[RMDB]
RNA sequence: GGGAACGACUCGAGUAGAGUCGAAAAUUGAAAUUGAACCGUACUGUUAUCGAAAGAUAGGCAGAAGAUACGAAAUGUGUGACAGCAUGGGAAGUAAAGGCAGACCGUGGUUCCCUUGAGUAUCUUAAUUAGGGGGACGAGUUCGCUCGUCCCCCAAGAGUAGCUAAUUGUUCGCAAUUAGCUACUCAAAAGAAACAACAACAACAAC
Reactivity to DMS in 0.01 (KOAc 150mM, MgCl2 10mM, bicine 150mM(pH8.5), 24C), signal-to-noise 2, nucleotides 027 to 156: u000u010g020a050a160a150u000u010g040a080a130c030c030g030u000a130c000u020g000u000u010a040u000c020g030a190a100a170g020a090u010a040g020g020c020a030g000a060a060g020a060u000a050c030g020a130a110a070u000g030u000g030u010g000a090c100a160g010c030a040u020g000g000g010a070a080g040u000a030a060a100g020g010c040a100g010a090c030c020g010u000g000g000u000u000c000c000c000u000u000g000a160g000u000a020u000c010u010u000a050a120u000u000a230g010g010g030g020g000a050c000g040a040g010u000u000c140g000c000u000c030g000u010c000c000c020c000c000a000a000
Reactivity to 2A3 in 0.01 (KOAc 150mM, MgCl2 10mM, bicine 150mM(pH8.5), 24C), signal-to-noise 2, nucleotides 027 to 156: u070u060g090a030a010a050u100u080g040a110a060c010c040g000u070a040c020u020g000u030u010a040u070c010g030a020a040a040g020a010u020a080g150g000c000a010g000a100a000g010a040u030a020c020g040a020a010a060u100g070u010g040u040g040a010c010a070g040c010a040u020g000g010g020a000a040g010u130a090a160a150g150g050c040a030g010a030c020c080g030u050g000g040u040u000c000c000c000u000u020g010a020g000u000a000u020c000u020u030a120a110u160u270a110g000g000g000g020g000a000c000g000a010g020u080u120c150g000c160u000c020g000u000c000c000c000c000c000a000a000